Structure probing data (DMS) for a 177-nucleotide construct. Source: RMDB library OK2TRN, as collected in RNAgym. For DMS, 820 sequencing reads were counted. Values cover nucleotides 27 to 126.
[RMDB]
RNA sequence: GGGAACGACUCGAGUAGAGUCGAAAAGGGGAUGAGGCCUAAGGGAGGCACCAGGGGCAGAAAAGAGGAGCUCCUGCCCUCGUCCUCCGUGGCGCCCCCACCCCCACCAUCUCCCUGCAGCCUCGCCCUUAGCACUCGGUUUCGACCGAGUGCUAAGAAAAGAAACAACAACAACAAC
Reactivity to DMS in 0.01 (KOAc 150mM, MgCl2 10mM, bicine 150mM(pH8.5), 24C), signal-to-noise 2, nucleotides 027 to 126: g000g000g000g000a060u000g030a020g000g040c020c080u000a300a050g000g000g000a000g030g020c230a100c220c160a110g000g020g040g020c030a020g000a050a030a090a060g000a090g010g000a220g000c100u030c090c000u000g000c010c010c010u020c000g000u000c040c010u020c200c270g000u000g000g000c000g030c010c030c000c000c000a300c060c000c000c000c040a150c210c120a090u010c020u000c000c000c010u000g000c200a300g000c000c020u000c000g000c000c010